[RMDB]
RNA sequence: GGGAACGACUCGAGUAGAGUCGAAAAGCUGAGUUUUGAUGGUAUCAUGCAUCAAAGACUGAGUAGUGAUCCUCAGUCACUCAGCCUGGACAGUAUGCCUCUAUGGAUCACUACAUAGAGACUUGUGCAUGAUACCACAAGUGCAUACAGACGUUGACGAUGCAUGAUAGUUCGCUAUCAUGCAUCGAAAAGAAACAACAACAACAAC
Reactivity to DMS in 0.01 (KOAc 150mM, MgCl2 10mM, bicine 150mM(pH8.5), 24C), signal-to-noise 1, nucleotides 027 to 156: g030c030u000g000a030g040u000u010u000u000g020a180u010g030g010u000a000u010c000a040u000g030c030a030u010c050a110a070a210g000a160c040u010g030a150g000u000a050g020u000g010a080u000c040c040u000c010a120g010u000c090a020c000u000c020a030g030c050c010u000g010g010a120c090a140g040u010a080u000g000c000c020u000c050u000a070u000g010g010a110u030c050a060c010u000a010c000a160u000a010g010a120g050a070c060u030u000g030u000g010c020a060u000g000a050u000a040c030c030a010c000a000a080g020u000g040c020a070u010a010c030a020g000a040c090g030u000u000g020a300
Reactivity to 2A3 in 0.01 (KOAc 150mM, MgCl2 10mM, bicine 150mM(pH8.5), 24C), signal-to-noise 2, nucleotides 027 to 156: g000c000u000g010a000g030u070u060u020u040g100a110u000g000g000u000a000u010c000a000u000g000c000a010u020c030a160a020a000g080a100c100u080g040a000g010u000a000g000u000g010a000u010c000c010u040c060a020g030u020c030a020c000u020c000a010g010c000c010u010g050g050a010c000a030g020u010a020u000g010c020c000u000c020u020a030u080g010g000a000u000c000a000c010u000a000c010a020u090a020g140a000g010a040c030u090u150g000u010g000c000a000u010g000a010u010a000c000c000a000c000a000a000g000u010g050c010a010u010a020c010a020g050a060c040g050u010u010g000a000

Structure probing data (DMS and 2A3) for a 207-nucleotide construct.
The RNA was probed in 150 mM KOAc, 10 mM MgCl2 and 150 mM bicine (pH 8.5) at 24 C.
2A3 adducts were read by reverse transcription with SuperScript II with manganese.